[RMDB]
RNA sequence: GGGAACGACUCGAGUAGAGUCGAAAAGAUAUGGACAAUGACCCGCAAUACAGGACCAUCGAUCUGGAGUUUCAUCGGAAACGAUGAAACUCCAGGGAGGUCCUGUAAUUGCGCAUUGUCCUAAGUCGAAUCAUGACAUGUUCGCAUGUCAUGAUUCAAAAGAAACAACAACAACAAC
Reactivity to DMS in 0.01 (KOAc 150mM, MgCl2 10mM, bicine 150mM(pH8.5), 24C), signal-to-noise 1, nucleotides 027 to 126: g040a070u020a300u000g010g020a000c010a050a020u010g040a300c300c220c060g030c000a040a030u000a030c000a000g000g010a010c000c000a300u020c230g010a050u010c000u010g000g000a040g000u010u000u010c020a030u020c000g030g000a060a050a300c020g000a000u000g010a020a000a030c000u000c000c000a000g000g000g000a020g060g060u000c000c000u010g000u010a000a040u000u000g000c010g000c000a000u000u000g000u000c010c000u010a020a090g010u010c080
The record gives the reactivity of an RNA of 177 nucleotides to DMS. Reactivities are given for positions 27 through 126. DMS adducts were read by reverse transcription with MarathonRT. It was measured as part of the RMDB library TTRINS.